Chemical mapping of a 207-nucleotide RNA with 2A3 and DMS. For DMS, 3,357 sequencing reads were counted. The RNA was probed in 150 mM KOAc, 10 mM MgCl2 and 150 mM bicine (pH 8.5) at 24 C. High DMS reactivity at an A or C suggests that its Watson-Crick edge is free. For DMS the reverse transcriptase was MarathonRT.
[RMDB]
RNA sequence: GGGAACGACUCGAGUAGAGUCGAAAAAAUAUGCUGAUUGAUUUUGUCCUGGCUGAUACAGGCAAAGGGAAAAUAACAAAGGCGGAUUGAUGGGGUGGCUAAUGAUAUCAGAUAAACUCAUAACGCUGGUGAAGAGCCUCUGUGUACUUGUCGGCAAUACUACGCUAUAUUUCGAUAUAGCGUAGUAAAAAGAAACAACAACAACAAC
Reactivity to 2A3 in 0.01 (KOAc 150mM, MgCl2 10mM, bicine 150mM(pH8.5), 24C), signal-to-noise 2, nucleotides 027 to 156: a000a020u200a050u060g010c050u060g030a150u120u020g010a000u020u120u120u130g100u090c000c000u000g000g040c000u060g060a060u030a220c050a010g010g040c020a050a040a040g050g000g020a040a030a030a080u120a050a030c060a030a050a000g030g000c020g010g040a030u030u040g030a030u140g010g010g020g020u000g020g000c010u040a070a060u090g070a000u020a030u100c000a010g000a020u110a050a100a020c020u040c070a010u010a110a010c060g000c030u020g000g000u050g040a040a040g020a010g060c000c010u000c020u010g050u000g000u030a050c010u020u010g040u090c010g020g010c000a000a040
Reactivity to DMS in 0.01 (KOAc 150mM, MgCl2 10mM, bicine 150mM(pH8.5), 24C), signal-to-noise 2, nucleotides 027 to 156: a060a100u010a060u000g040c040u000g000a120u000u000g000a230u000u000u010u000g010u000c010c020u000g030g040c070u000g030a190u010a120c120a070g020g000c010a020a030a090g030g000g010a110a030a060a110u020a080a080c050a050a030a140g040g050c100g030g000a130u000u000g010a100u000g030g020g040g060u000g010g000c030u000a020a060u010g010a100u000a100u000c030a050g030a120u000a050a100a100c070u000c050a020u000a060a130c070g030c010u010g070g010u000g000a080a180g010a140g010c060c030u000c020u020g020u000g010u000a030c070u000u000g030u020c010g020g010c080a060a210